[RMDB]
RNA sequence: GGGAACGACUCGAGUAGAGUCGAAAACUAACAGGGGAGGUACGUUUCAUAGCCGAAACUCACCGAGACUUAUCUAUCUCCGUACAGAGGGCUCUAAAAGUCUGUCAGCCUACCUAUCGUCGCCUGCCGACAUCCAAUAAUUCGUUAUUGGAUGUCGAAAAGAAACAACAACAACAAC
Reactivity to DMS in 0.01 (KOAc 150mM, MgCl2 10mM, bicine 150mM(pH8.5), 24C), signal-to-noise 9, nucleotides 027 to 126: c050u010a090a090c150a070g010g000g010g010a090g000g010u000a070c150g010u000u000u000c030a090u030a110g030c100c060g000a060a050a070c050u010c070a080c070c050g010a080g000a040c060u010u010a060u010c060u020a100u000c020u000c010c050g010u000a070c130a080g000a090g010g000g000c030u010c060u020a050a080a070a060g000u010c010u000g000u010c060a080g010c030c020u000a070c050c020u010a050u010c030g010u010c040g000c020c010u000g010c160
Reactivity to 2A3 in 0.01 (KOAc 150mM, MgCl2 10mM, bicine 150mM(pH8.5), 24C), signal-to-noise 9, nucleotides 027 to 126: c020u040a050a040c040a100g000g020g010g010a030g020g030u050a030c050g020u020u010u050c090a110u140a060g050c040c030g090a090a030a030c040u040c040a060c010c030g020a010g020a030c050u100u060a050u070c040u030a090u050c020u000c020c020g030u060a020c040a020g090a100g030g030g010c010u020c010u070a140a150a030a030g060u030c040u040g090u060c040a020g010c010c010u040a060c030c010u060a070u090c030g050u020c020g020c020c000u040g040c030